[RMDB]
Structure probing data (DMS and 2A3) for a 177-nucleotide construct. DMS adducts were read by reverse transcription with MarathonRT. For DMS, 1,475 sequencing reads were counted.
RNA sequence: GGGAACGACUCGAGUAGAGUCGAAAAAGCGGCAGGCUUGCCACGCGAUGCAGCACUUUCGGCAAAUUCGAUUUCAUGCGCGUGCCUUCGCCAGCGGCAAGCACGAUGGAAAGGCAUGUACGGUCAAAUAAUCCCGUCCAUUCGUGGACGGGAUUAUAAAAGAAACAACAACAACAAC
Reactivity to DMS in 0.01 (KOAc 150mM, MgCl2 10mM, bicine 150mM(pH8.5), 24C), signal-to-noise 2, nucleotides 027 to 126: a060g030c060g020g020c080a130g020g000c040u010u000g000c050c030a040c090g000c070g000a080u000g030c040a070g000c010a040c120u000u010u000c070g010g010c060a080a090a100u010u000c090g000a080u000u000u000c070a100u000g000c070g000c090g030u000g000c010c020u000u000c100g000c010c030a050g040c060g000g000c000a060a050g010c140a070c030g020a060u010g000g000a080a080a030g010g030c010a040u000g000u000a070c060g010g000u000c110a050a110
Reactivity to 2A3 in 0.01 (KOAc 150mM, MgCl2 10mM, bicine 150mM(pH8.5), 24C), signal-to-noise 1, nucleotides 027 to 126: a000g110c060g040g000c010a050g070g120c020u020u080g070c020c000a020c030g000c020g020a060u080g050c030a020g060c020a030c000u060u110u100c070g040g000c050a050a040a110u180u120c050g100a150u090u000u170c130a090u190g020c030g000c030g000u000g000c000c010u040u030c100g030c070c000a040g080c000g020g000c020a050a030g080c090a010c010g030a010u010g000g030a000a000a020g020g000c030a010u030g080u050a030c000g000g060u080c020a180a000